The record gives the reactivity of an RNA of 207 nucleotides to 2A3. For 2A3 the reverse transcriptase was SuperScript II with manganese. Source: RMDB library OK3TST, as collected in RNAgym.

[RMDB]
RNA sequence: GGGAACGACUCGAGUAGAGUCGAAAAACAGGAGGGAUUUACUAGUACCCGAUGAUCCUGUACGGGAUGAAGAGGGGCGUGUUAUUGGGUGCCGCGCACUGGCAUUUAUCGGAGGAGGAAACGCGGAAUGAACUUUCGGGAAAUGUGGGAAGCCGCCGGGUUAGUUACAAUUCGUUGUAACUAACCCAAAAGAAACAACAACAACAAC
Reactivity to 2A3 in 0.01 (KOAc 150mM, MgCl2 10mM, bicine 150mM(pH8.5), 24C), signal-to-noise 2, nucleotides 027 to 156: a010c030a000g020g040a070g000g000g000a000u120u130u060a000c060u100a070g100u080a120c020c000c020g020a020u090g020a010u030c000c000u020g020u070a060c100g000g050g020a060u070g040a070a090g020a060g050g020g010g020c070g000u080g000u020u180a120u070u090g060g020g000u010g010c010c000g030c070g020c030a060c130u040g000g030c030a000u030u100u070a120u170c050g010g000a040g000g010a020g040g030a050a050a000c030g010c020g020g080a040a040u060g000a060a010c030u020u180u090c070g000g000g000a040a020a110u140g000u050g000g010g010a000a020g000c000c000g130c140c020